[RMDB]
RNA sequence: GGGAACGACUCGAGUAGAGUCGAAAACAACCCAACACGCGCUCUCAGCUGGCCGGUGUGGCACAACCCUCCCCCCACCUCCCCUUCUUGGCCUUCGCCAGUGUGGGAGCCUCGUCUCACUGGAGAGGAGAUCAUAAGUAUUCGUACUUAUGAUCUCAAAAGAAACAACAACAACAAC
Reactivity to DMS in 0.01 (KOAc 150mM, MgCl2 10mM, bicine 150mM(pH8.5), 24C), signal-to-noise 9, nucleotides 027 to 126: c190a140a150c000c000c010a100a140c180a110c100g020c300g000c020u000c020u000c040a120g010c040u010g010g010c040c110g010g010u000g010u010g000g010c040a070c070a100a120c050c010c010u000c010c000c010c000c000c020a100c100c030u000c010c000c010c050u010u010c070u000u010g010g010c020c070u000u010c090g010c000c010a020g010u000g020u000g010g000g010a060g010c040c050u010c050g000u000c020u000c020a120c100u010g010g010a080g000a100g020
Reactivity to 2A3 in 0.01 (KOAc 150mM, MgCl2 10mM, bicine 150mM(pH8.5), 24C), signal-to-noise 9, nucleotides 027 to 126: c040a030a100c000c000c010a040a030c090a020c050g080c010g010c010u000c000u010c010a030g000c020u030g020g010c040c040g060g010u090g020u060g060g010c040a030c030a120a130c020c010c010u030c010c000c000c000c000c000a030c010c010u020c000c000c000c000u060u050c020u050u120g040g010c010c010u070u060c040g010c000c010a010g010u140g020u070g070g010g010a010g010c000c010u040c010g040u010c010u010c010a100c070u090g040g040a080g010a020g110